[RMDB]
RNA sequence: GGGAACGACUCGAGUAGAGUCGAAAAGACUUCGGCAACGACGCCAGCAAGGGGCAGACGGCCUACAACAUCGUCACCAAUGUGAACGGCUUCGGUGCCGGUUCGGUGUUCAAGAUCUUCACGGCCGCCGCCGCGAUCCAGCAGGGUUGGACCCCGGCCUAAAAGGACGGUUCGCCGUCCUUUUAGGAAAAGAAACAACAACAACAAC
Reactivity to 2A3 in 0.01 (KOAc 150mM, MgCl2 10mM, bicine 150mM(pH8.5), 24C), signal-to-noise 1, nucleotides 027 to 156: g030a000c010u070u040c090g050g000c030a060a050c020g130a000c070g100c030c030a010g050c110a010a160g060g000g000g040c180a040g000a060c030g110g000c100c010u170a130c030a040a030c000a010u080c040g060u050c030a000c040c010a060a090u130g070u110g110a090a090c070g010g030c000u080u030c130g150g070u110g010c040c000g010g010u040u060c000g000g030u040g000u010u010c030a150a060g010a150u060c030u050u060c100a000c060g000g070c000c080g000c060c010g010c020c040g060c010g000a010u070c070c020a100g090c030a010g010g120g000u050u070g000g010a010c000c050c030c000g040g000